[RMDB]
RNA sequence: GGGAACGACUCGAGUAGAGUCGAAAAUUCCAUUGACCCACUGCUCGAGGACGUCCUCCCUGUCUCCUCGGUUCUUCUUCGAUCCGGACCGGCUCAUCUCGGCAAAGGGCGGCAGUCCUCAGUACUCCGAUCGGACGCUUCGGCGUCCGAAAAAGAAACAACAACAACAAC
Reactivity to 2A3 in 0.01 (KOAc 150mM, MgCl2 10mM, bicine 150mM(pH8.5), 24C), signal-to-noise 2, nucleotides 027 to 129: u110u020c000c000a010u000u120g050a120c020c000c000a050c050u010g000c000u010c020g010a000g010g030a080c020g060u080c000c030u000c000c000c010u040g010u010c050u000c030c010u020c000g010g030u000u060c020u120u000c000u040u120c020g110a080u030c030c040g020g040a040c020c000g040g000c000u000c080a150u020c020u000c060g000g000c000a050a000a060g010g010g000c000g030g050c010a040g010u000c010c020u030c040a000g030u020a070c010u020c010c010g030a040
Reactivity to DMS in 0.01 (KOAc 150mM, MgCl2 10mM, bicine 150mM(pH8.5), 24C), signal-to-noise 4, nucleotides 027 to 129: u010u020c040c090a140u000u020g000a070c020c050c080a080c100u010g080c050u050c060g040a060g000g110a070c090g060u050c050c070u040c000c000c000u040g020u080c020u020c050c010u010c040g020g050u000u050c050u080u000c100u010u050c090g100a080u000c000c040g000g020a100c090c060g000g010c060u090c090a100u030c050u040c090g080g000c050a030a040a090g000g000g060c050g000g100c300a020g000u020c000c000u050c100a070g020u000a080c060u040c030c030g000a100
Structure probing data (2A3 and DMS) for a 170-nucleotide construct. The RNA was probed in 150 mM KOAc, 10 mM MgCl2 and 150 mM bicine (pH 8.5) at 24 C. Reactivities are given for positions 27 through 129. For DMS, 5,782 sequencing reads were counted.